[RMDB]
RNA sequence: GGGAACGACUCGAGUAGAGUCGAAAACUGCCGCCGGGACGCAGUGAUCCUUGCAGGGUCGCACGGUCGCCUCGGGUCGGCCUCGUGUCGGCUCGACCUGCGAGGGGAGCGAGUGGCGAGCCCGACCAAAACUUUCUCGCCUUCGGGCGAGAAAGAACAUGUUUGGUCUCUUCGGAGACCAAACAUGAAAAGAAACAACAACAACAAC
Reactivity to 2A3 in 0.01 (KOAc 150mM, MgCl2 10mM, bicine 150mM(pH8.5), 24C), signal-to-noise 1, nucleotides 027 to 156: c020u020g020c000c000g000c000c010g040g020g110a130c090g050c020a090g240u010g010a020u010c000c010u000u010g030c020a010g000g040g030u130c060g000c050a020c140g020g010u020c010g000c000c030u010c020g000g000g000u010c010g000g020c040c000u040c090g300u300g010u070c000g000g000c030u020c010g030a060c000c000u010g000c000g010a010g020g000g000g000a010g000c010g020a050g100u070g030g010c010g010a040g000c030c020c000g020a020c000c030a000a070a020a030c000u000u000u000c000u000c000g000c000c030u060u060c160g130g000g000c000g000a000g000a000a000a000g000a010a000

The record gives the reactivity of an RNA of 207 nucleotides to 2A3.